The record gives the reactivity of an RNA of 177 nucleotides to DMS and 2A3. For 2A3 the reverse transcriptase was SuperScript II with manganese. It was measured as part of the RMDB library M2PK50. The RNA was probed in 150 mM KOAc, 10 mM MgCl2 and 150 mM bicine (pH 8.5) at 24 C. For DMS the reverse transcriptase was MarathonRT.
[RMDB]
RNA sequence: GGGAACGACUCGAGUAGAGUCGAAAAUUGAACGGAUUCGUCCGUUCAACGCGUGCGAUCCAAUCGUAGUACAAAAGUACAGACGAAAGCACAAGGAUCAAAUGAUACAGCCGUUCGCGGCUGUAAACGCAAAUGAACCUUUCGAGGUUCAUUUGCGAAAAGAAACAACAACAACAAC
Reactivity to DMS in 0.01 (KOAc 150mM, MgCl2 10mM, bicine 150mM(pH8.5), 24C), signal-to-noise 2, nucleotides 027 to 126: u000u000g000a010a000c010g000g030a040u000u020c240g030u000c010c010g000u010u000c000a000a000c070g020c270g020u010g000c140g030a090u000c010c000a140a160u000c000g010u000a080g000u000a000c000a080a120a190a290g030u000a000c000a080g000a070c000g000a000a080a180g000c030a040c030a080a190g000g000a020u000c030a150a070a050u010g000a220u000a010c030a010g020c010c010g020u030u010c160g000c000g020g080c000u000g010u000a000a070a120
Reactivity to 2A3 in 0.01 (KOAc 150mM, MgCl2 10mM, bicine 150mM(pH8.5), 24C), signal-to-noise 1, nucleotides 027 to 126: u040u000g000a000a020c000g000g020a000u000u030c170g140u010c030c010g000u010u000c000a000a000c010g000c030g040u060g000c040g000a010u000c000c030a050a000u030c010g020u050a050g030u010a000c020a030a300a060a060g000u000a010c000a040g100a010c020g000a090a030a050g080c030a020c050a060a070g050g000a090u050c030a050a110a100u160g050a060u030a050c010a000g000c000c000g000u070u070c230g000c000g080g070c000u000g000u000a000a000a000